[RMDB]
About this RNA
This 207-nucleotide RNA was probed chemically with 2A3. Reactivities are rounded to 0.1 and cut off at 0 and 3.
RNA sequence: GGGAACGACUCGAGUAGAGUCGAAAAACUGAAAAAAACAAAACUUUUCAGAUGUUGUAAAAGUUAUGGAUGAGUCUGGAUAUUGUUCUCUGUACCUGAUGAGGUGACCAUCACAGGUCCUUGGAAUGAGGUCAGUGAGAUAUGUGUGCAUAGGUAAGUACGUAUGGAGUUUCGACUCCAUACGUACAAAAGAAACAACAACAACAAC
Reactivity to 2A3 in 0.01 (KOAc 150mM, MgCl2 10mM, bicine 150mM(pH8.5), 24C), signal-to-noise 1, nucleotides 027 to 156: a000c030u030g000a040a000a000a020a000a000a000c060a060a140a090a050c050u050u040u040u030c000a040g000a140u040g000u000u000g020u040a050a130a090a190g020u040u000a060u060g060g000a080u020g000a010g020u020c000u030g020g030a050u050a070u070u080g020u080u010c020u030c000u020g070u010a000c000c020u080g050a190u050g000a060g030g010u090g100a040c000c000a030u090c050a050c010a040g000g070u050c050c020u010u000g040g030a110a060u080g030a010g130g000u050c090a060g050u010g080a040g060a010u070a060u180g030u020g000u010g010c010a030u130a060g170g010u250a080a050